Background
Structure probing data (2A3) for a 207-nucleotide construct.

RNA sequence: GGGAACGACUCGAGUAGAGUCGAAAAAACGUUGCAUGAUCGUAAAACAUGCCCGGCUUACCGUGACCCGCCUUUGAAAGAAAGGUUUACACGGACUCUGUUGCGUUACGCACGUACCUAACUUGUGAAAACGGCAUCUUGUUCGCAAGAUGCCGAACGACUAUUGGGUCUUCGGACCCAAUAGUCGAAAAGAAACAACAACAACAAC
Reactivity to 2A3 in 0.01 (KOAc 150mM, MgCl2 10mM, bicine 150mM(pH8.5), 24C), signal-to-noise 2, nucleotides 027 to 156: a000a010c000g010u010u010g000c000a000u030g050a090u230c040g080u300a170a000a000a000c000a000u000g000c010c000c000g010g000c030u040u040a080c000c000g010u000g040a020c000c010c010g000c010c010u070u020u010g090a110a070a000g040a010a060a000g000g000u000u030u030a020c000a000c010g050g000a090c000u030c080u260g140u130u000g000c000g030u030u060a100c190g010c020a000c000g020u050a000c030c000u000a060a220c090u210u120g080u100g180a060a020a110a080c000g000g010c000a000u000c010u010u000g010u050u000c200g000c120a000a000g000a000u040g000c000c000g010a000a000
The 2A3 profile rests on 866 reads. The reactions ran in a buffer of 150 mM KOAc, 10 mM MgCl2 and 150 mM bicine (pH 8.5), at 24 C.